[RMDB]
RNA sequence: GGGAACGACUCGAGUAGAGUCGAAAACACGACGGACACCGUGCUGCGCUUUCUUGGCGGGCGUCCAGCCCUGGUGGUGCUGGAUAACUGCGAGCACCUGCUGGAUGCGACGGCGGCCUUGGUGUUAGGUUCAUUAGUCAUUCGUGACUAAUGAACCAAAAGAAACAACAACAACAAC
Reactivity to DMS in 0.01 (KOAc 150mM, MgCl2 10mM, bicine 150mM(pH8.5), 24C), signal-to-noise 2, nucleotides 027 to 126: c010a030c030g000a110c170g020g000a050c050a060c000c000g030u020g000c120u070g000c040g000c070u000u050u030c120u030u020g010g020c000g000g030g020c110g030u000c000c010a000g000c020c290c100u010g010g020u030g000g000u000g000c010u010g000g010a100u040a060a120c180u020g000c040g030a030g070c030a000c020c000u000g010c020u000g000g000a000u000g000c000g000a020c000g000g000c050g010g010c020c070u020u000g000g050u010g000u000u000a150
Reactivity to 2A3 in 0.01 (KOAc 150mM, MgCl2 10mM, bicine 150mM(pH8.5), 24C), signal-to-noise 9, nucleotides 027 to 126: c060a010c030g110a010c030g060g010a010c020a010c040c010g030u070g050c040u150g010c030g010c030u130u150u110c070u140u190g070g000c020g020g050g000c010g000u000c000c000a000g000c040c010c030u130g130g040u150g030g070u110g030c000u020g030g080a110u140a220a160c070u160g060c050g050a030g020c030a040c020c000u020g000c010u010g010g000a020u030g010c030g070a090c030g050g010c000g020g010c010c000u040u160g040g000u010g010u030u050a080